Chemical mapping of a 207-nucleotide RNA with 2A3. The reactions ran in a buffer of 150 mM KOAc, 10 mM MgCl2 and 150 mM bicine (pH 8.5), at 24 C. 2A3 adducts were read by reverse transcription with SuperScript II with manganese.
RNA sequence: GGGAACGACUCGAGUAGAGUCGAAAACCGUAGGAAUCGGGUGAGACAUUUACUUUGAUCUGCUCUUCGAAAGAGGAGCAGGGAGUAAACCCUCAUCUCUAGCGUGUUCCUAAACGGAAAAGUACCAUAGAAGUCCUUCGGGACUUCUAUGGUACAAGACUUGAUUUGUGUUCGCACAAAUCAAGUCAAAAGAAACAACAACAACAAC
Reactivity to 2A3 in 0.01 (KOAc 150mM, MgCl2 10mM, bicine 150mM(pH8.5), 24C), signal-to-noise 1, nucleotides 027 to 156: c010c020g010u010a040g040g010a010a010u020c040g010g030g000u000g030a020g010a020c080a100u050u010u000a020c020u110u230u100g070a120u080c010u030g000c020u000c000u020u020c010g060a140a090a030g000a000g000g000a000g010c000a000g010g000g000a000g010u010a010a010a020c090c010c030u000c000a010u010c040u020c110u050a020g080c050g120u210g020u070u000c010c000u000a190a070a020c040g060g040a010a040a040a110g010u030a010c000c000a000u010a000g020a010a000g030u040c050c000u090u130c300g030g010g000a020c000u020u000c000u000a020u000g000g010u000a000c000a010a000